[RMDB]
RNA sequence: GGGAACGACUCGAGUAGAGUCGAAAACGGAGCUCUCCAGGGAGCGCUUUGUUGUUCGAUGCCGGCUGGUUGGAAAAGGACGGGCCCUUGGGGGCGGUCCUGGUUGUCUUCUCUCCAGAAAUGGCGGUAUGUAAUGGUUCUUCGGAACCAUUACAUAAAAAGAAACAACAACAACAAC
Reactivity to DMS in 0.01 (KOAc 150mM, MgCl2 10mM, bicine 150mM(pH8.5), 24C), signal-to-noise 2, nucleotides 027 to 126: c070g030g010a120g000c030u000c010u000c020c100a140g000g030g010a000g020c050g010c070u000u000u050g010u000u000g020u030u000c030g000a130u000g020c020c010g000g000c000u000g000g000u000u010g000g000a030a030a110a040g000g010a010c000g000g040g000c010c000c000u020u070g010g030g000g030g000c030g010g000u000c000c010u000g010g020u030u000g010u030c130u000u000c030u000c060u020c000c000a030g010a020a100a070u040g010g000c040g010g030
Reactivity to 2A3 in 0.01 (KOAc 150mM, MgCl2 10mM, bicine 150mM(pH8.5), 24C), signal-to-noise 2, nucleotides 027 to 126: c000g040g000a020g000c000u000c020u010c100c070a150g050g070g000a020g070c080g030c040u000u030u050g000u000u000g030u000u010c050g040a160u210g000c040c030g030g000c020u010g000g020u060u010g010g000a020a020a000a000g000g020a020c030g070g300g050c010c010c030u060u160g200g020g000g060g000c030g000g000u000c000c000u050g010g100u090u120g090u000c040u010u000c020u000c000u000c010c020a020g030a040a230a040u280g020g000c060g010g020